[RMDB]
RNA sequence: GGGAACGACUCGAGUAGAGUCGAAAAACCAUCCUAUUCGUAGGAUGGUGCACCAUUGCCGAUUGAAUAUAAUACCGCAGGCGGAAAAGCGGUUCAAAUAAGGAACUUGUCAGUUCGCUGACAAGAACAUGUACUGACGAUUCGUCGUCAGUACAUGAAAAGAAACAACAACAACAAC
Reactivity to 2A3 in 0.01 (KOAc 150mM, MgCl2 10mM, bicine 150mM(pH8.5), 24C), signal-to-noise 4, nucleotides 027 to 126: a000c000c000a000u000c000c000u010a030u050u080c230g040u060a000g010g000a000u000g000g010u000g000c010a030c040c000a070u040u220g040c010c020g110a120u070u120g040a110a020u170a030u050a210a170u090a080c010c000g000c030a050g090g000c000g050g080a050a100a010a000g000c010g020g000u040u100c080a080a040a040u150a120a110g110g000a050a110c000u020u000g000u000c000a000g010u010u070c190g000c070u000g000a000c000a010a000g000a010a020
Reactivity to DMS in 0.01 (KOAc 150mM, MgCl2 10mM, bicine 150mM(pH8.5), 24C), signal-to-noise 6, nucleotides 027 to 126: a010c000c000a010u000c000c000u000a030u000u010c170g030u000a010g010g000a010u000g000g010u000g010c150a190c020c020a120u010u010g000c020c010g000a160u010u000g000a090a080u000a120u010a100a110u010a050c020c010g030c010a090g010g020c060g030g000a060a040a090a110g010c010g000g010u000u000c100a040a060a100u020a070a120g010g000a120a130c000u000u000g000u000c000a020g010u000u010c170g020c000u000g000a010c010a000a010g010a080a150
The record gives the reactivity of an RNA of 177 nucleotides to 2A3 and DMS. Conditions: 150 mM KOAc, 10 mM MgCl2 and 150 mM bicine (pH 8.5), 24 C. For DMS, 6,631 sequencing reads were counted.